[RMDB]
RNA sequence: GGGAACGACUCGAGUAGAGUCGAAAAGAUAUGGAUAUACGAGCUUUUGACGCGGACUACUCGGAAACGAGUAGGUCGCGAUAAGCUCAGUAUAUCCUAAGUCAAAAGCAUUGGUUCGCCAAUGCAACCAUACUAUAUAGUUCGCUAUAUAGUAUGGAAAAGAAACAACAACAACAAC
Reactivity to 2A3 in 0.01 (KOAc 150mM, MgCl2 10mM, bicine 150mM(pH8.5), 24C), signal-to-noise 9, nucleotides 027 to 126: g030a010u080a030u140g000g000a000u000a000u000a010c010g000a000g020c020u130u170u300u300g300a180c070g000c000g000g010a010c000u000a000c000u000c000g010g010a040a060a030c010g000a010g000u000a000g000g000u010c000g000c000g010a010u020a010a000g000c000u000c010a000g000u000a000u000a000u000c000c000u010a080a010g040u000c040a040a040a090a120g000c000a010u000u020g050g020u080u230c300g020c140c000a010a000u000g000c000a000a010
Reactivity to DMS in 0.01 (KOAc 150mM, MgCl2 10mM, bicine 150mM(pH8.5), 24C), signal-to-noise 9, nucleotides 027 to 126: g010a020u000a300u010g000g000a010u000a000u000a010c010g000a010g010c000u000u000u010u000g020a230c110g020c000g000g000a020c000u000a000c000u000c010g010g000a090a090a160c010g010a010g010u000a000g000g010u000c000g020c000g020a040u000a010a010g010c000u000c000a060g030u000a000u000a000u000c000c000u010a020a080g010u010c040a100a100a140a160g010c010a010u000u000g000g010u000u010c290g020c000c000a010a010u000g010c010a080a110